This 177-nucleotide RNA was probed chemically with DMS.
The DMS profile rests on 1,006 reads.
It was measured as part of the RMDB library RFMREP.
[RMDB]
RNA sequence: GGGAACGACUCGAGUAGAGUCGAAAAGACGGUGAGGGACGAAAGCUCGGGUCACGAACCGGAUUAGAUACCCGGGUAGUCCGAGCUGUAAACGAUGUCUGCUAGGUGUGGCACAGGCUACGAGCCUCGUUUCAGUAAGGUUCGCCUUACUGAAACGAAAAGAAACAACAACAACAAC
Reactivity to DMS in 0.01 (KOAc 150mM, MgCl2 10mM, bicine 150mM(pH8.5), 24C), signal-to-noise 2, nucleotides 027 to 126: g000a060c070g030g010u000g000a130g020g020g010a110c040g000a070a110a070g020c000u000c000g010g010g000u000c250a060c030g000a070a300c010c000g000g000a030u000u000a170g000a180u010a110c140c000c000g010g010g000u000a110g020u010c010c000g010a020g000c000u010g000u000a050a040a080c110g010a050u000g010u000c000u000g010c090u010a050g050g010u000g010u010g010g000c050a130c120a070g010g000c010u000a070c130g000a140g020c040c010u010